[RMDB]
RNA sequence: GGGAACGACUCGAGUAGAGUCGAAAAUUCGUCUAGAGGUUUCAAUGUGUCUAUACGAAUUGGACACUGGGCGGUACACCGCUACCAGUUGGAUGGUAACACUUAGGUAGGGGACACUCCUCUGGGACAUUUAGUGGGUGUUCGCACCCACUAAAUGAAAAGAAACAACAACAACAAC
Reactivity to 2A3 in 0.01 (KOAc 150mM, MgCl2 10mM, bicine 150mM(pH8.5), 24C), signal-to-noise 2, nucleotides 027 to 126: u010u010c010g000u000c020u020a000g010a050g090g020u100u270u300c120a080a090u200g030u020g010u000c010u090a080u030a110c030g080a040a040u060u060g030g000a020c010a000c040u000g000g020g030c040g000g040u090a040c110a130c090c010g060c050u100a140c010c010a020g010u090u060g170g030a110u070g090g070u090a150a010c020a000c050u060u130a050g090g000u030a030g050g230g010g030a010c020a000c010u020c000c000u000c000u040g030g010g070a000
Reactivity to DMS in 0.01 (KOAc 150mM, MgCl2 10mM, bicine 150mM(pH8.5), 24C), signal-to-noise 4, nucleotides 027 to 126: u000u000c040g020u010c030u000a020g000a050g010g000u010u010u020c150a090a080u010g010u000g000u000c060u000a120u000a170c090g010a050a090u000u000g000g000a120c040a030c010u010g010g010g000c030g020g000u010a120c300a130c010c010g000c020u000a080c020c000a040g010u000u000g020g000a140u000g000g000u010a090a130c060a040c090u010u000a140g020g010u010a030g000g010g000g010a080c080a030c040u000c010c000u000c020u000g010g000g010a130
Chemical mapping of a 177-nucleotide RNA with 2A3 and DMS.
Conditions: 150 mM KOAc, 10 mM MgCl2 and 150 mM bicine (pH 8.5), 24 C.
2A3 adducts were read by reverse transcription with SuperScript II with manganese.
The data come from the RNA Mapping Database (RMDB), library OK2TRN.